Notes: This 177-nucleotide RNA was probed chemically with DMS and 2A3. It was measured as part of the RMDB library OK1LIB. For DMS, 45,999 sequencing reads were counted. For 2A3 the reverse transcriptase was SuperScript II with manganese.
[RMDB]
RNA sequence: GGGAACGACUCGAGUAGAGUCGAAAACGUGAACAUCGCUCUGCUAAGUCCCGUCGUUCUUCCAGUCAGAGCGAGAUUGUAAGCAACCUUAUGCGCAAUGAAGACAUAGAGGGACUUCUUAAACAAGCAUAAUAAUGACUUUCGAGUCAUUAUUAUGAAAAGAAACAACAACAACAAC
Reactivity to DMS in 0.01 (KOAc 150mM, MgCl2 10mM, bicine 150mM(pH8.5), 24C), signal-to-noise 9, nucleotides 027 to 126: c130g010u030g010a110a110c130a090u000c010g000c000u000c010u000g010c150u030a070a050g000u010c040c020c020g000u010c020g000u000u000c010u010u010c040c080a080g010u020c020a010g000a030g010c000g000a030g010a060u010u010g000u010a090a140g010c060a060a110c120c090u010u010a030u000g010c040g020c050a050a060u030g010a110a080g010a090c070a070u010a050g020a080g000g000g010a050c040u000u000c110u000u010a070a100a100c250a070a090g010
Reactivity to 2A3 in 0.01 (KOAc 150mM, MgCl2 10mM, bicine 150mM(pH8.5), 24C), signal-to-noise 9, nucleotides 027 to 126: c050g120u120g100a060a020c020a100u010c000g000c000u000c000u020g060c060u080a050a020g030u040c010c010c020g070u050c020g020u060u020c010u100u020c020c000a050g080u110c000a010g010a000g020c030g010a010g010a020u030u060g030u090a100a060g010c010a040a110c040c050u150u140a080u130g010c040g000c030a030a050u140g040a110a020g030a030c050a060u150a030g110a070g020g000g010a010c000u050u020c040u060u200a140a130a030c070a060a010g060
For 2A3, 65,282 sequencing reads were counted.